Annotation: The record gives the reactivity of an RNA of 177 nucleotides to 2A3 and DMS.
RNA sequence: GGGAACGACUCGAGUAGAGUCGAAAAGAGACCCUUCCAACCUACGUACUUCGCCAUCGAUAUUUGUUUGACGACCAGAGCUUCGGCGUCUUUCCAGACGCUCACGACGAUCUUUUCCUUCAAAUUCAUUUAGAACGAUCUUCGGAUCGUUCUAAAUAAAAGAAACAACAACAACAAC
Reactivity to 2A3 in 0.01 (KOAc 150mM, MgCl2 10mM, bicine 150mM(pH8.5), 24C), signal-to-noise 5, nucleotides 027 to 126: g110a020g020a070c010c010c000u040u020c020c030a060a040c020c010u040a040c030g020u010a040c030u020u040c030g040c010c020a050u070c030g060a070u040a100u120u110u090g120u040u080u120g050a050c030g000a040c000c020a050g000a010g080c010u060u050c030g000g000c020g000u010c000u030u100u020c020c010a010g000a020c010g020c020u010c020a040c050g070a010c020g020a040u010c020u020u060u030u010c000c000u040u080c020a040a110a190u120u080c030
Reactivity to DMS in 0.01 (KOAc 150mM, MgCl2 10mM, bicine 150mM(pH8.5), 24C), signal-to-noise 3, nucleotides 027 to 126: g000a130g000a130c020c010c020u000u010c060c060a050a090c070c020u000a060c070g020u010a090c060u000u010c080g010c030c020a070u020c040g000a130u000a060u030u000u000g000u030u000u000g000a080c060g000a090c050c030a050g020a110g000c030u000u000c070g000g000c000g020u010c000u000u010u000c150c150a080g010a080c070g020c000u000c070a060c070g000a050c050g000a060u010c030u000u010u000u000c000c010u000u010c130a050a070a110u020u030c130

DMS adducts were read by reverse transcription with MarathonRT. The RNA was probed in 150 mM KOAc, 10 mM MgCl2 and 150 mM bicine (pH 8.5) at 24 C. High DMS reactivity at an A or C suggests that its Watson-Crick edge is free. It was measured as part of the RMDB libraries RFM100 and RFMREP. Reactivities are given for positions 27 through 126.